[RMDB]
RNA sequence: GGGAACGACUCGAGUAGAGUCGAAAAGAUAGACACUGACUUUGAGGAGAUUGUUUCAUGUUUAACAAGAUAUGUCAGUGCCAUUUUCACAUCCAACUCACAACCAAUCAGCUGUGCCUUGAACCAAGGCCAAUCAGGUACUGAGGCAAGAGAUCAAUAUCUCCAAAAGGUUCGCCUUUUGGAGAUAAAAAGAAACAACAACAACAAC
Reactivity to 2A3 in 0.01 (KOAc 150mM, MgCl2 10mM, bicine 150mM(pH8.5), 24C), signal-to-noise 3, nucleotides 027 to 156: g040a060u120a030g030a020c000a010c000u010g030a000c010u060u140u200g130a160g100g020a080g040a080u070u060g180u060u100u140c110a100u180g040u160u140u010a040a040c020a020a020g010a090u110a020u190g000u000c000a010g000u000g000c000c000a070u100u070u060u110c080a060c020a070u030c030c030a040a060c030u010c040a050c010a030a100c020c010a050a060u050c020a030g040c020u040g030u110g060c000c000u030u040g070a070a050c130c040a050a000g000g010c000c020a020a070u110c000a000g020g020u070a050c010u040g000a000g030g000c040a020a070g000a000g020a010u050c000a000a100
Reactivity to DMS in 0.01 (KOAc 150mM, MgCl2 10mM, bicine 150mM(pH8.5), 24C), signal-to-noise 2, nucleotides 027 to 156: g020a060u000a060g030a060c010a050c020u000g010a050c020u000u000u000g050a160g030g000a160g000a180u000u000g000u000u000u060c050a110u000g000u010u030u010a050a120c040a020a130g030a160u010a050u000g000u000c000a000g010u000g010c000c010a180u000u000u000u000c080a100c090a110u000c030c020a070a030c010u010c030a060c050a060a080c050c000a150a120u010c120a080g040c070u000g010u010g060c020c000u000u000g020a120a150c110c100a020a060g010g020c020c030a030a070u000c070a060g000g010u000a070c080u010g000a100g000g010c080a050a100g000a120g010a160u000c050a060a150
This 207-nucleotide RNA was probed chemically with 2A3 and DMS. Values are in units of 0.01, from 0 to 300, in steps of 10.